The record gives the reactivity of an RNA of 177 nucleotides to 2A3 and DMS.
The 2A3 profile rests on 18,571 reads.
For 2A3 the reverse transcriptase was SuperScript II with manganese.
The data come from the RNA Mapping Database (RMDB), library OK1LIB.
[RMDB]
RNA sequence: GGGAACGACUCGAGUAGAGUCGAAAAACAUGCUACAAUGGCCAGUACAGAGGGCUGCGAGACAGUGAGGUGGAGCGAAUCCCUUAAAGCUGGUCUCAGUUCGGAUCGCCGUAUGCAACUCGACGGCAGUUUAUUUGAAAUUCGUUUCAAAUAAACUAAAAGAAACAACAACAACAAC
Reactivity to 2A3 in 0.01 (KOAc 150mM, MgCl2 10mM, bicine 150mM(pH8.5), 24C), signal-to-noise 9, nucleotides 027 to 126: a000c050a040u170g050c050u160a070c070a110a220u160g020g000c000c000a020g040u100a040c050a090g050a040g020g020g010c030u030g010c010g010a030g040a010c020a030g060u110g170a070g050g160u050g010g020a020g010c010g020a030a080u060c010c010c000u010u060a060a050a000g010c000u000g000g000u000c000u000c000a010g010u030u030c030g030g030a050u050c020g000c000c000g000u010a030u080g050c040a060a040c020u020c060g020a000c000g000g000c000
Reactivity to DMS in 0.01 (KOAc 150mM, MgCl2 10mM, bicine 150mM(pH8.5), 24C), signal-to-noise 9, nucleotides 027 to 126: a080c100a080u030g010c060u020a050c140a090a070u030g000g010c030c000a030g010u000a050c120a300g000a050g010g010g010c230u000g010c020g000a300g000a040c020a040g000u020g010a120g010g010u010g000g000a300g010c050g000a070a070u010c000c000c010u020u000a020a080a220g000c000u000g000g000u000c000u010c090a090g000u010u010c070g010g000a100u020c070g000c000c010g000u000a010u020g000c120a060a090c110u010c050g000a030c020g000g000c020